[RMDB]
An RNA of 207 nucleotides, treated with DMS and 2A3 and read out base by base. The DMS profile rests on 3,266 reads.
RNA sequence: GGGAACGACUCGAGUAGAGUCGAAAAUGCUAAGGGUUUGAUAUCUGCUAAAACGCGGUGCAUUCAUCAAUGCAGGUUAAGCCAAAGGGAUGUCCCGACCGGAGGCCGACAAUCCAGGGAACCGGAUAAAAGAUUGGUGGGUUCGCCCACCAAUCAACUGUCAAUAUUGGUUCGCCAAUAUUGACAGAAAAGAAACAACAACAACAAC
Reactivity to DMS in 0.01 (KOAc 150mM, MgCl2 10mM, bicine 150mM(pH8.5), 24C), signal-to-noise 2, nucleotides 027 to 156: u000g030c050u010a120a140g010g030g010u000u000u010g010a080u000a060u000c030u010g000c010u000a120a080a050a100c040g000c020g050g040u000g020c040a150u000u000c020a040u000c060a070a140u000g010c000a060g000g050u000u000a060a030g000c000c000a010a300a260g020g020g020a080u000g010u010c000c000c030g010a000c010c000g010g000a300g020g010c050c000g000a110c060a020a070u000c010c020a020g000g000g000a100a120c040c080g020g000a070u000a050a000a130a180g000a020u000u000g000g000u000g010g010g000u000u020c300g040c010c000c030a000c000c000a000a010u000c000a020a080
Reactivity to 2A3 in 0.01 (KOAc 150mM, MgCl2 10mM, bicine 150mM(pH8.5), 24C), signal-to-noise 3, nucleotides 027 to 156: u090g000c010u060a030a040g050g020g030u030u020u050g050a030u030a040u080c030u030g000c010u090a080a070a010a030c170g030c060g170g020u030g030c030a090u060u210c040a090u130c050a080a180u140g000c000a010g030g040u030u030a030a000g000c000c000a030a000a010g010g000g010a020u030g030u040c000c000c000g010a000c000c000g010g000a020g030g000c000c000g000a000c020a120a050u110c140c060a020g000g030g030a050a080c080c070g060g000a080u150a120a180a010a000g010a000u010u000g000g030u010g000g010g010u020u030c090g090c020c000c000a000c000c000a000a000u000c000a000a010

Reactivities are rounded to 0.1 and cut off at 0 and 3. Reactivities are given for positions 27 through 156. Conditions: 150 mM KOAc, 10 mM MgCl2 and 150 mM bicine (pH 8.5), 24 C.